[RMDB]
RNA sequence: GGGAACGACUCGAGUAGAGUCGAAAACUGCUAGCACACACGUGCAUCUCAGGGAGCGCGGGCUAUACCACACGGUGGUGUAACUGCAGAAGCGACGGAGUGUCCUUGAGGCACUGGCCGUGAGCACGGAGGUCGGCGGGUUCGCCUGCCGACUUCCAAAAGAAACAACAACAACAAC
Reactivity to DMS in 0.01 (KOAc 150mM, MgCl2 10mM, bicine 150mM(pH8.5), 24C), signal-to-noise 8, nucleotides 027 to 126: c020u000g000c040u020a110g020c020a000c040a070c060a070c120g010u000g000c030a070u010c020u000c030a050g000g000g000a110g010c060g010c030g010g000g000c090u000a030u020a040c030c010a070c020a160c160g020g010u000g010g000u010g000u000a030a060c040u010g000c040a070g000a120a100g010c030g000a080c070g010g010a070g010u010g000u000c010c000u010u010g000a080g010g000c000a000c010u000g000g000c030c050g000u010g000a000g020c040a140c190
Reactivity to 2A3 in 0.01 (KOAc 150mM, MgCl2 10mM, bicine 150mM(pH8.5), 24C), signal-to-noise 8, nucleotides 027 to 126: c010u010g010c010u020a020g010c010a000c000a000c000a010c030g010u010g010c000a120u030c020u010c010a030g000g020g020a030g000c030g000c010g010g020g000c010u010a010u020a020c000c000a020c030a040c070g180g020u020g020g000u010g010u010a040a020c030u050g000c010a020g030a110a010g030c010g050a030c030g050g030a060g020u050g030u000c010c000u030u100g020a080g020g000c000a000c010u010g060g020c010c010g000u020g020a000g000c010a010c050

Chemical mapping of a 177-nucleotide RNA with DMS and 2A3. The 2A3 profile rests on 33,916 reads. The RNA was probed in 150 mM KOAc, 10 mM MgCl2 and 150 mM bicine (pH 8.5) at 24 C.